[RMDB]
RNA sequence: GGGAACGACUCGAGUAGAGUCGAAAAAACGUAUAUUCCUGAGGAAAUAUAUGAGUGCGGCUGAAGGUCGGUGCUUCUAGGGUACUUGGGACCGAUGUGUGUUAAUGAAACUAGACACGCAUAAUACGCAUCCUAAUUACUUCGGUAAUUAGGAUGCAAAAGAAACAACAACAACAAC
Reactivity to DMS in 0.01 (KOAc 150mM, MgCl2 10mM, bicine 150mM(pH8.5), 24C), signal-to-noise 2, nucleotides 027 to 126: a080a090c040g010u000a050u010a080u000u010c020c020u030g020a110g040g000a100a060a070u000a020u010a010u000g010a060g000u000g030c050g040g000c060u020g030a130a080g010g010u000c030g000g000u000g000c020u010u000c090u000a070g000g010g040u000a030c030u000u000g000g020g010a020c120c040g020a030u000g000u000g010u000g000u000u000a060a070u020g000a120a040a110c210u000a140g020a030c010a020c030g000c000a020u000a040a070u000a050c210
Reactivity to 2A3 in 0.01 (KOAc 150mM, MgCl2 10mM, bicine 150mM(pH8.5), 24C), signal-to-noise 2, nucleotides 027 to 126: a000a010c070g030u070a110u010a020u110u040c010c000u030g060a050g050g010a030a100a010u060a030u020a030u090g030a030g060u040g020c020g050g000c040u110g090a110a050g090g010u070c050g070g010u050g020c030u020u090c050u100a040g100g000g000u020a030c010u050u040g030g010g030a030c050c030g020a030u020g030u010g000u010g000u020u030a100a090u140g200a140a040a030c070u050a060g020a040c000a000c000g000c010a020u040a080a050u110a100c100